[RMDB]
Structure probing data (2A3 and DMS) for a 177-nucleotide construct. For DMS, 1,355 sequencing reads were counted. It was measured as part of the RMDB library TTRDEL. For 2A3, 2,025 sequencing reads were counted.
RNA sequence: GGGAACGACUCGAGUAGAGUCGAAAAGAUAUGGAAAUUACGAGAACGGUACUACCCACCUCGGAAACGAGAGGUACACGUUCGAUGAGUAAUUUCCUAAGUCAAAAUCUUAGGUUCGCCUAAGAAACUAAAUCCUGUACUUCGGUACAGGAUUUAGAAAAGAAACAACAACAACAAC
Reactivity to 2A3 in 0.01 (KOAc 150mM, MgCl2 10mM, bicine 150mM(pH8.5), 24C), signal-to-noise 2, nucleotides 027 to 126: g080a050u200a120u190g000g000a020a020a010u000u010a000c010g020a030g000a220a010c010g000g040u010a010c010u130a120c060c030c000a060c010c030u000c020g000g040a070a050a020c000g000a020g030a010g110g000u010a010c300a050c040g010u020u000c000g040a060u120g020a020g000u010a030a000u000u010u020c000c010u010a090a000g070u010c070a070a000a090a300u000c000u020u000a000g030g000u030u070c250g120c070c000u010a000a010g000a070a030a050
Reactivity to DMS in 0.01 (KOAc 150mM, MgCl2 10mM, bicine 150mM(pH8.5), 24C), signal-to-noise 2, nucleotides 027 to 126: g000a140u000a230u000g010g000a000a010a010u000u000a000c000g010a110g010a010a000c000g020g060u000a040c010u000a030c030c010c050a300c160c000u020c000g000g000a060a100a170c000g000a000g000a110g020g000u000a000c030a140c000g020u000u000c000g010a110u000g000a220g000u000a000a010u000u000u000c010c000u000a010a070g000u020c170a170a100a080a100u000c000u000u000a000g000g000u000u020c250g040c000c010u000a000a010g000a050a140a150